[RMDB]
An RNA of 207 nucleotides, treated with DMS and 2A3 and read out base by base.
Conditions: 150 mM KOAc, 10 mM MgCl2 and 150 mM bicine (pH 8.5), 24 C.
Source: RMDB library OK3TST, as collected in RNAgym.
2A3 adducts were read by reverse transcription with SuperScript II with manganese.
For DMS the reverse transcriptase was MarathonRT.
RNA sequence: GGGAACGACUCGAGUAGAGUCGAAAACAGGGCGUUACGAUAGGCCCAUUUUACUAUCGAGAUUACAUCGUGGGAGACCACGUAGAGACCGCAACUGCUGGGUCUAUGAACAGCAGAGUUACACCGCUUUUCGUUGCGCGGGAUGAAGCAACGUACACAUACGAGUACUCUUCGGAGUACUCGUAUGAAAAGAAACAACAACAACAAC
Reactivity to DMS in 0.01 (KOAc 150mM, MgCl2 10mM, bicine 150mM(pH8.5), 24C), signal-to-noise 2, nucleotides 027 to 156: c120a090g000g010g000c030g020u000u000a140c020g020a070u000a030g040g000c040c020c070a080u000u010u010u010a060c030u000a030u000c010g060a240g020a210u000u000a110c060a150u000c020g030u020g020g000g030a300g020a300c020c000a030c020g030u000a060g000a160g020a050c020c050g000c050a090a210c000u000g000c020u000g000g030g000u000c050u010a100u010g020a080a080c010a020g000c000a000g000a130g030u010u000a050c040a160c030c020g010c020u000u010u000u000c020g010u000u010g020c010g020c060g000g000g000a120u000g020a070a110g030c000a060a030c010g010u000a060c080a250
Reactivity to 2A3 in 0.01 (KOAc 150mM, MgCl2 10mM, bicine 150mM(pH8.5), 24C), signal-to-noise 5, nucleotides 027 to 156: c050a030g010g010g030c030g050u090u190a080c020g100a010u010a020g010g000c000c000c010a010u060u100u030u070a070c020u030a010u010c030g040a040g030a090u200u300a100c090a150u120c010g000u000g000g000g000a060g050a070c000c020a010c010g000u020a080g010a010g000a000c010c010g030c070a070a090c040u010g000c000u010g020g020g030u010c130u100a160u230g090a050a010c000a000g000c010a010g020a020g000u020u140a070c090a040c050c000g020c050u050u040u040u080c000g000u000u010g000c000g000c000g000g080g070a210u200g070a010a000g010c010a000a000c000g020u040a020c090a000